Record summary
An RNA of 207 nucleotides, treated with 2A3 and DMS and read out base by base. The 2A3 profile rests on 596 reads. The reactions ran in a buffer of 150 mM KOAc, 10 mM MgCl2 and 150 mM bicine (pH 8.5), at 24 C.
RNA sequence: GGGAACGACUCGAGUAGAGUCGAAAACAGAAGGGUUAAAUCACUGUAUCCCUUCCAUGGUUUUAAGUGGUUUUAAUUUGGUUUCUGCAUAGGAAGAUUGUUUAUUCAUCAGUCUGCUUGGGAGGAAAACUUGUUUGGAAUUCAGUGUUAGUAAAAAAAUAAUAGAACGAUUCGUCGUUCUAUUAUUAAAAGAAACAACAACAACAAC
Reactivity to 2A3 in 0.01 (KOAc 150mM, MgCl2 10mM, bicine 150mM(pH8.5), 24C), signal-to-noise 2, nucleotides 027 to 156: c040a030g030a050a000g070g010g000u120u100a020a070a030u140c010a000c060u030g050u120a110u130c010c000c000u010u000c020c000a060u060g040g030u030u110u110u130a060a020g020u020g070g080u020u050u040u130a140a170u060u050u080g060g000u070u070u020c050u080g040c000a050u040a060g090g010a080a010g010a050u050u040g030u010u210u090a100u120u090c030a040u000c000a010g060u000c010u000g030c030u060u030g050g010g000a030g010g110a010a000a020a090c010u060u040g040u030u060u060g040g020a020a030u220u020c020a020g010u030g090u110u090a030g120u180a030a100a080a160a030
Reactivity to DMS in 0.01 (KOAc 150mM, MgCl2 10mM, bicine 150mM(pH8.5), 24C), signal-to-noise 2, nucleotides 027 to 156: c040a070g010a040a020g000g020g040u000u000a030a060a130u000c040a070c070u010g000u010a170u000c010c000c010u000u000c080c060a110u010g010g020u010u000u010u000a070a090g030u000g030g020u000u000u000u000a010a120u010u010u000g020g010u010u010u000c000u020g020c040a100u010a090g000g020a070a040g000a080u000u000g010u040u000u000a080u030u010c140a060u000c020a060g010u010c020u000g000c030u010u010g020g000g020a140g010g020a070a030a110a080c040u000u000g010u000u020u000g010g010a050a120u000u000c020a050g010u010g010u000u010a120g030u010a000a000a040a140a070